[RMDB]
Conditions: 150 mM KOAc, 10 mM MgCl2 and 150 mM bicine (pH 8.5), 24 C. An RNA of 177 nucleotides, treated with DMS and 2A3 and read out base by base. For 2A3 the reverse transcriptase was SuperScript II with manganese. The DMS profile rests on 3,753 reads.

RNA sequence: GGGAACGACUCGAGUAGAGUCGAAAAUGCUUGCAGUCCCAGCUUCCGGAAUGAGAGGGAGAGCGCAGCAUCUGGCUCCACACGAUCAUCCAGUACAUUUCACCACAUUGUCUGCAGCUCACCUCGCCAAUCACCAAUACUUCGGUAUUGGUGAUUGAAAAGAAACAACAACAACAAC
Reactivity to DMS in 0.01 (KOAc 150mM, MgCl2 10mM, bicine 150mM(pH8.5), 24C), signal-to-noise 4, nucleotides 027 to 126: u000g000c030u000u000g020c050a090g000u000c010c010c010a220g010c070u010u010c050c040g010g020a140a110u030g010a080g000a060g000g000g010a140g000a020g030c050g000c010a020g010c040a060u000c100u000g010g010c060u000c020c040a080c060a070c100g010a070u000c050a030u010c040c040a090g000u010a060c170a110u020u000u010c050a120c040c030a060c110a090u010u000g000u010c020u000g000c010a090g040c020u010c040a130c020c010u000c010g020c170
Reactivity to 2A3 in 0.01 (KOAc 150mM, MgCl2 10mM, bicine 150mM(pH8.5), 24C), signal-to-noise 5, nucleotides 027 to 126: u070g030c030u040u090g000c010a020g040u050c020c000c000a010g000c000u070u020c040c040g090g110a170a130u150g040a120g010a030g160g030g020a300g010a000g060c020g000c020a000g000c010a020u020c040u010g020g010c030u010c040c010a050c000a000c060g050a070u050c020a030u010c020c020a010g030u050a040c030a110u070u070u100c100a100c060c000a050c020a090u040u100g060u080c020u010g000c000a060g000c010u000c000a020c010c000u020c000g020c000